Structure probing data (DMS and 2A3) for a 177-nucleotide construct. Values cover nucleotides 27 to 126. Source: RMDB library OK2TRN, as collected in RNAgym.
RNA sequence: GGGAACGACUCGAGUAGAGUCGAAAAGCUGUUUGAUGAGUUACCAGAAGAGUGUGCACAAGAGUGUGAGACAUUGCUUGAAGAUGCUCGCAAUGCUGAUUCACACGCCUCAGCAUGGAAGAGUGCCCGGUAUACGUGGGUUCGCCCACGUAUACCGAAAAGAAACAACAACAACAAC
Reactivity to DMS in 0.01 (KOAc 150mM, MgCl2 10mM, bicine 150mM(pH8.5), 24C), signal-to-noise 3, nucleotides 027 to 126: g000c010u000g010u000u000u010g020a070u000g010a060g000u010u000a070c060c050a090g020a120a070g020a060g020u000g020u010g020c060a080c120a080a070g000a130g010u000g010u000g020a040g000a080c010a010u000u000g010c050u000u020g000a120a200g020a070u010g000c020u000c060g010c050a020a000u000g010c070u000g000a150u000u010c030a020c040a000c060g020c100c100u000c050a080g020c030a070u000g010g010a070a080g000a080g010u000g010c040c080
Reactivity to 2A3 in 0.01 (KOAc 150mM, MgCl2 10mM, bicine 150mM(pH8.5), 24C), signal-to-noise 2, nucleotides 027 to 126: g000c010u000g070u280u100u120g110a140u050g040a030g110u060u070a030c020c020a010g020a070a000g030a030g050u120g000u090g050c010a020c000a090a070g060a020g060u040g000u000g020a030g030a040c000a020u020u020g060c040u080u040g010a120a070g130a190u190g090c030u020c020g000c020a000a000u030g000c070u080g030a170u020u070c020a040c020a030c070g080c000c010u040c030a040g000c000a020u100g080g020a060a070g030a030g050u060g030c000c000